[RMDB]
RNA sequence: GGGAACGACUCGAGUAGAGUCGAAAACUGCUGUGAGAUUUGGUCUCAGGAAGGUCCCUCUUCAACACAUGGCCUACUUUCCAGGGGUAGGGAACACAACGGGGUCAGGGAGGACGGCAGGGCACACACCGUACCGAUAUUUCGAUAUCGGUACGGUAAAAGAAACAACAACAACAAC
Reactivity to 2A3 in 0.01 (KOAc 150mM, MgCl2 10mM, bicine 150mM(pH8.5), 24C), signal-to-noise 3, nucleotides 027 to 126: c010u040g020c050u050g040u060g160a110g040a130u080u200u220g140g040u050c030u000c060a040g070g030a060a010g020g050u010c020c000c000u030c020u060u040c040a090a080c010a000c010a210u100g050g000c000c000u080a090c060u060u050u020c020c070a020g000g000g030g040u090a070g030g030g030a090a020c090a010c010a110a110c060g020g020g010g030u060c060a010g010g000g040a060g000g020a010c000g000g000c010a030g010g030g070c020a040c020a000c020
Reactivity to DMS in 0.01 (KOAc 150mM, MgCl2 10mM, bicine 150mM(pH8.5), 24C), signal-to-noise 3, nucleotides 027 to 126: c060u000g010c070u000g010u000g000a080g020a090u010u020u000g010g000u000c020u000c030a130g010g000a040a070g020g000u000c030c000c010u010c040u000u000c030a070a080c130a080c130a090u010g010g000c070c020u010a080c080u000u000u000c060c070a130g020g020g010g010u010a080g000g000g000a100a090c160a060c130a070a110c110g000g000g000g010u010c050a090g000g000g000a090g000g010a070c110g000g000c030a060g010g000g000c080a060c100a070c150